[RMDB]
RNA sequence: GGGAACGACUCGAGUAGAGUCGAAAAGCUAUGUCGAUCGGGUGUCCGCGCUAAGUCGGGCGUCAAUAUGGUGCCUUAAGAGGAGUCUCGAGUCACCAGGUUGGUUAAAGAGGAGCGUACCGGCCCAGGGUGGAAACACAGCAGGCAAAAGCUCCCGCAUGCUGGUAUGGUUCGCCAUACCAGCAUGAAAAGAAACAACAACAACAAC
Reactivity to 2A3 in 0.01 (KOAc 150mM, MgCl2 10mM, bicine 150mM(pH8.5), 24C), signal-to-noise 1, nucleotides 027 to 156: g000c010u010a010u040g010u070c010g040a160u060c050g030g000g090u040g000u000c010c010g050c030g080c130u160a060a000g110u090c000g000g000g000c000g050u080c000a000a060u040a060u070g010g010u000g000c030c000u090u120a110a030g020a110g090g040a180g120u050c000u000c010g010a000g000u010c000a000c000c000a010g010g020u080u080g020g010u040u130a140a140a010g090a090g130g010a040g000c000g010u060a250c020c030g040g000c030c040c010a020g090g000g010u000g010g000a010a130a000c000a000c000a000g120c020a000g000g000c000a010a020a020a000g020c010u070c000c010c010g000
Notes:
An RNA of 207 nucleotides, treated with 2A3 and read out base by base. The 2A3 profile rests on 781 reads. The RNA was probed in 150 mM KOAc, 10 mM MgCl2 and 150 mM bicine (pH 8.5) at 24 C.